[RMDB]
RNA sequence: GGGAACGACUCGAGUAGAGUCGAAAAGGCAACAGGCAUGCCCAUAAAAAUACCGUGGCCGCCAGAUCUGCAAUCUGCCAUCGGGGCCCUAGGCCUUCCUAGCCCUGAGGCUGCAGCCAGCUCGCCGCGUACAGGACUAUUUCGAUAGUCCUGUACGAAAAGAAACAACAACAACAAC
Reactivity to 2A3 in 0.01 (KOAc 150mM, MgCl2 10mM, bicine 150mM(pH8.5), 24C), signal-to-noise 3, nucleotides 027 to 126: g030g000c020a040a020c060a190g030g040c030a050u090g030c000c000c000a030u230a050a200a010a020a010u120a070c030c050g010u090g000g020c010c010g000c010c030a070g020a170u040c030u040g000c020a030a180u030c080u180g010c010c000a190u020c010g000g000g020g020c050c120c050u030a010g000g030c010c010u120u240c060c000u030a090g030c000c000c020u020g000a030g010g000c010u010g000c000a000g030c020c020a030g020c040u070c060g040c000c000g020
Reactivity to DMS in 0.01 (KOAc 150mM, MgCl2 10mM, bicine 150mM(pH8.5), 24C), signal-to-noise 4, nucleotides 027 to 126: g000g020c020a050a080c080a100g020g010c090a120u010g020c020c020c040a140u030a010a060a070a090a080u010a060c090c040g010u000g020g020c030c160g000c050c080a080g000a070u010c020u010g010c040a060a100u000c210u010g000c020c010a110u020c020g020g010g000g030c130c220c080u000a010g000g000c280c110u000u000c010c010u000a100g000c000c010c010u010g020a060g020g020c000u000g010c030a020g020c150c040a060g010c040u000c070g010c020c040g010